[RMDB]
RNA sequence: GGGAACGACUCGAGUAGAGUCGAAAAUCAAUCGCAUUGUUGGGUGAAAGUUGGAGGAUAAAUCCUCACCAAGAUUUAAAUUAAGCAAGAGAUAUAAGGCUGCUCCUUAUAUUGCGACUUGCUUAAAGAUAUCCGGCAAAGUUCGCUUUGCCGGAAACAUUAUAUACAGCUUCGGCUGUAUAUAAUGAAAAGAAACAACAACAACAAC
Reactivity to 2A3 in 0.01 (KOAc 150mM, MgCl2 10mM, bicine 150mM(pH8.5), 24C), signal-to-noise 2, nucleotides 027 to 156: u110c020a000a020u080c080g050c050a030u050u020g030u010u070g040g010g030u100g050a140a070a090g090u170u140g120g000a010g020g000a010u190a170a100a140u050c010c020u030c010a010c000c030a010a010g000a090u060u180u300a060a180a100u050u030a000a000g010c000a000a000g000a000g000a020u020a000u000a000a020g060g010c110u070g040c020u300c050c010u020u000a000u000a000u010u050g100c070g060a060c030u000u000g000c000u010u010a000a000a000g030a000u130a040u000c020c000g050g020c000a000a000a000g050u040u080c110g000c030u000u000u010g000c000c000g000g040a010a000a000
Reactivity to DMS in 0.01 (KOAc 150mM, MgCl2 10mM, bicine 150mM(pH8.5), 24C), signal-to-noise 2, nucleotides 027 to 156: u000c050a090a100u000c110g010c070a110u000u000g020u000u000g010g000g020u000g000a070a050a090g020u000u010g000g010a130g010g020a120u020a070a130a190u000c010c000u020c030a060c050c040a060a120g000a140u000u000u000a070a070a230u000u000a000a030g010c000a010a000g000a300g000a030u000a000u010a010a000g000g010c080u010g010c300u000c010c000u010u000a000u000a020u000u000g020c050g020a130c010u010u000g000c000u010u010a000a010a080g000a210u000a040u000c000c000g030g030c000a010a010a040g000u000u000c300g020c000u010u000u000g020c030c000g010g000a010a000a030